[RMDB]
RNA sequence: GGGAACGACUCGAGUAGAGUCGAAAAGGAGUGCUACCGAAAGGUAGCACUCCAACAAAUCGGUGUAAGCGCAGCCCUGCUUACACCGUGCGGCACAGCGGAAACGCUGAUGUCGUAUACUGGGCUAGGUAUAUUAGCAUUUCGAUGCUAAUAUACCAAAAGAAACAACAACAACAAC
Reactivity to 2A3 in 0.01 (KOAc 150mM, MgCl2 10mM, bicine 150mM(pH8.5), 24C), signal-to-noise 3, nucleotides 027 to 126: g000g000a000g010u000g000c000u000a000c000c000g060a070a070a070g000g000u000a000g000c000a000c000u000c010c000a000a000c000a000a000a010u060c000g010g000u000g000u000a010a010g000c030g000c070a010g000c010c000c000u010g000c000u010u000a000c000a000c000c000g000u010g000c010g000g000c000a000c000a010g000c000g010g030a070a050a010c010g000c000u000g010a050u010g000u000c000g000u000a010u020a020c100u080g010g000g010c010u020a100
Reactivity to DMS in 0.01 (KOAc 150mM, MgCl2 10mM, bicine 150mM(pH8.5), 24C), signal-to-noise 4, nucleotides 027 to 126: g010g020a020g010u000g010c010u000a010c000c010g010a140a090a130g010g010u000a010g020c000a000c000u000c000c000a010a050c100a030a070a040u010c000g010g020u000g000u000a010a010g010c000g020c070a080g000c010c000c000u000g000c000u000u000a010c000a000c010c000g020u000g010c010g010g010c000a030c010a000g010c000g020g010a140a140a200c010g020c000u000g000a040u000g030u000c000g010u000a060u010a080c270u000g010g010g010c020u000a080
Chemical mapping of a 177-nucleotide RNA with 2A3 and DMS. For DMS the reverse transcriptase was MarathonRT.